An RNA of 177 nucleotides, treated with DMS and read out base by base.
The RNA was probed in 150 mM KOAc, 10 mM MgCl2 and 150 mM bicine (pH 8.5) at 24 C.

RNA sequence: GGGAACGACUCGAGUAGAGUCGAAAAGAUAUGGAAUCGGCCAGAUUAGCUGCAACAUCCAGCAUAUAGGUCGGAAACGACCUAUAUGCUGGAUGUUGGCAGCGACGAUCUGGCGAUUCCUAAGUCAGUUUUAUAGGAAGUUCGCUUCCUAUAAAACAAAAGAAACAACAACAACAAC
Reactivity to DMS in 0.01 (KOAc 150mM, MgCl2 10mM, bicine 150mM(pH8.5), 24C), signal-to-noise 1, nucleotides 027 to 126: g020a040u000a300u010g010g010a030a000u000c000g020g030c010c010a000g010a030u000u000a300g020c000u000g000c000a050a020c000a000u010c000c010a010g040c020a020u020a010u000a000g010g000u000c000g020g010a110a110a300c020g000a040c010c000u000a000u000a000u010g010c000u000g000g000a000u000g010u000u000g000g030c000a020g010c000g020a040c300g000a010u000c010u000g000g030c000g010a010u000u010c000c000u010a020a090g020u010c020a130